[RMDB]
RNA sequence: GGGAACGACUCGAGUAGAGUCGAAAACUCACGACGUUCGCGUCGUGAGAAAUAAAUUCAGCGGUAAUUCGAGCCCAAAUAUUACCGCUGAUGCGCUCGAAAAAAGGGUAUCCUUCGGGAUACCCAAUCUUUAUACGGAGUUCGCUCCGUAUAAAGAAAAAGAAACAACAACAACAAC
Reactivity to 2A3 in 0.01 (KOAc 150mM, MgCl2 10mM, bicine 150mM(pH8.5), 24C), signal-to-noise 2, nucleotides 027 to 126: c000u000c000a010c000g010a000c000g010u020u100c200g000c000g080u010c000g000u000g000a000g000a010a040a000u090a010a070a040u050u020c000a010g000c010g020g010u010a010a020u070u190c140g050a100g080c010c000c030a030a110a000u160a010u000u000a000c000c000g000c000u020g010a000u010g000c070g000c050u090c120g060a130a010a000a000a060a120g010g020g000u000a000u000c000c010u020u080c240g080g000g000a000u000a010c000c000c000a000a010
Reactivity to DMS in 0.01 (KOAc 150mM, MgCl2 10mM, bicine 150mM(pH8.5), 24C), signal-to-noise 3, nucleotides 027 to 126: c000u000c000a000c000g010a020c000g020u000u010c200g020c020g030u000c000g010u000g000a010g000a020a070a060u000a050a070a100u000u000c010a000g010c000g000g000u000a000a000u010u000c170g010a130g010c040c050c020a050a090a090u010a050u000u000a010c000c000g020c000u000g010a000u000g000c180g000c070u000c050g010a010a040a050a130a100a100g000g010g000u000a000u000c010c010u000u000c220g020g010g000a010u000a000c000c000c000a000a000

This 177-nucleotide RNA was probed chemically with 2A3 and DMS. The RNA was probed in 150 mM KOAc, 10 mM MgCl2 and 150 mM bicine (pH 8.5) at 24 C. 2A3 adducts were read by reverse transcription with SuperScript II with manganese. For DMS the reverse transcriptase was MarathonRT. Values are in units of 0.01, from 0 to 300, in steps of 10. DMS (dimethyl sulfate) methylates the pairing face of unpaired adenines and cytosines. Values cover nucleotides 27 to 126.